[RMDB]
RNA sequence: GGGAACGACUCGAGUAGAGUCGAAAAUCGCCAUGAGCGAAAUCUUCUGUAUCACUGAUCAUUCCGAGCCUAUGACGGCCCGGUUCUUGUCAGUGGUGCUUCGUAGAAUCCGAGGCAUGAGGUCGGAACCUAACCGUCCUUUCGAGGACGGUUAGGUAAAAGAAACAACAACAACAAC
Reactivity to 2A3 in 0.01 (KOAc 150mM, MgCl2 10mM, bicine 150mM(pH8.5), 24C), signal-to-noise 1, nucleotides 027 to 126: u010c020g000c060c010a270u220g050a120g040c050g010a020a020a120u050c030u140u090c050u080g060u010a020u030c000a000c010u000g010a000u050c010a050u170u070c000c000g000a020g010c010c000u300a300u300g170a110c120g000g000c000c010c010g000g060u030u000c080u040u080g010u000c000a010g000u000g000g010u000g000c030u050u060c060g000u030a030g070a150a040u050c020c010g010a050g060g050c120a140u200g060a070g010g080u020c020g040g000a040
Reactivity to DMS in 0.01 (KOAc 150mM, MgCl2 10mM, bicine 150mM(pH8.5), 24C), signal-to-noise 2, nucleotides 027 to 126: u000c030g030c000c010a130u000g010a190g000c000g000a040a060a090u020c070u000u010c060u010g020u000a010u000c000a010c000u000g000a040u000c300a090u000u000c000c020g030a030g000c000c010u000a130u030g000a110c290g000g000c000c010c020g020g000u000u010c090u000u000g000u000c000a000g000u010g000g010u010g030c020u010u000c110g010u000a070g030a030a140u000c090c020g000a130g010g020c070a090u020g000a040g010g050u010c030g000g020a110